[RMDB]
RNA sequence: GGGAACGACUCGAGUAGAGUCGAAAAUAGCGUCUUCUCCCCGACGGUUUCAAUCCAUAGCUUCACGUUGUGUAGCGUAGGUGGAAGGUAUCGUGUGGUGUAUAAACACCACAUAGUCUCUUAGGGGUCAAGCUGAUAAACUUCGGUUUAUCAGCAAUCUAUCUACCUAGUUCGCUAGGUAGAUAGAAAAAGAAACAACAACAACAAC
Reactivity to 2A3 in 0.01 (KOAc 150mM, MgCl2 10mM, bicine 150mM(pH8.5), 24C), signal-to-noise 9, nucleotides 027 to 156: u110a020g050c020g030u000c030u170u010c030u090c000c000c010c000g030a030c030g030g030u050u090u180c060a080a060u020c030c010a040u050a100g010c000u040u050c020a030c070g300u300u240g020u070g030u060a010g010c020g080u100a080g010g100u010g020g010a040a020g070g040u100a050u170c050g000u000g000u000g000g010u010g060u010a090u100a290a250a020c010a000c000c000a000c000a000u010a010g020u000c010u000c020u090u120a030g000g000g030g010u050c060a050a040g000c000u000g000a000u000a000a000a000c010u030u070c200g070g010u000u000u000a000u000c000a000g000c000a000a000
Reactivity to DMS in 0.01 (KOAc 150mM, MgCl2 10mM, bicine 150mM(pH8.5), 24C), signal-to-noise 4, nucleotides 027 to 156: u000a100g000c050g010u000c030u000u000c020u000c030c010c010c060g000a090c080g010g020u010u000u010c040a090a100u000c010c020a070u000a170g010c030u000u000c030a050c050g030u010u000g050u000g020u010a030g020c030g030u010a060g020g030u010g020g010a050a040g010g010u010a070u000c060g070u000g020u000g010g040u010g010u000a130u000a160a130a120c000a020c000c000a000c000a010u000a040g010u000c040u000c030u000u000a170g010g030g020g010u000c060a060a170g000c000u000g000a010u000a010a010a020c000u010u010c300g060g020u000u000u000a000u000c000a010g020c000a010a020
Source: RMDB library M2RFPK, as collected in RNAgym.
The record gives the reactivity of an RNA of 207 nucleotides to 2A3 and DMS.
DMS adducts were read by reverse transcription with MarathonRT.